[RMDB]
RNA sequence: GGGAACGACUCGAGUAGAGUCGAAAAGCUCUUAAUAUUCCAUACAUUCAGCUGCCACUGACAUACCUUAAAAAACACACACAAAGAUCCUUACUUCACCAUUCAUCUAACCCACUAUUGUCAGGUGCGUACAUCAAGCUUUCGAGCUUGAUGUACGAAAAGAAACAACAACAACAAC
Reactivity to DMS in 0.01 (KOAc 150mM, MgCl2 10mM, bicine 150mM(pH8.5), 24C), signal-to-noise 2, nucleotides 027 to 126: g040c030u000c020u000u000a110a110u000a140u030u020c030c000a090u010a080c210a060u040u000c060a060g000c050u000g010c070c020a080c020u000g000a050c060a050u010a060c050c040u010u020a000a080a030a080a050a060c050a030c070a080c060a050c030a050a020a090g010a120u000c040c030u000u000a040c100u000u000c030a020c060c040a050u000u000c040a040u000c030u000a080a160c020c010c010a040c100u000a070u000u000g010u010c040a030g000g000u010g020
Reactivity to 2A3 in 0.01 (KOAc 150mM, MgCl2 10mM, bicine 150mM(pH8.5), 24C), signal-to-noise 2, nucleotides 027 to 126: g020c000u000c000u080u160a220a070u100a170u290u020c020c020a040u060a180c000a080u020u130c030a030g000c000u040g040c040c000a040c040u040g040a020c010a040u120a110c010c050u090u080a020a110a050a000a100a020c070a000c020a000c000a000c050a150a020a010g080a050u080c010c010u040u040a070c020u000u040c020a000c040c000a040u040u090c010a030u000c030u040a060a090c000c030c000a040c040u070a090u120u110g090u030c010a010g140g000u060g030
An RNA of 177 nucleotides, treated with DMS and 2A3 and read out base by base. Reactivities are rounded to 0.1 and cut off at 0 and 3. The RNA was probed in 150 mM KOAc, 10 mM MgCl2 and 150 mM bicine (pH 8.5) at 24 C. For 2A3 the reverse transcriptase was SuperScript II with manganese.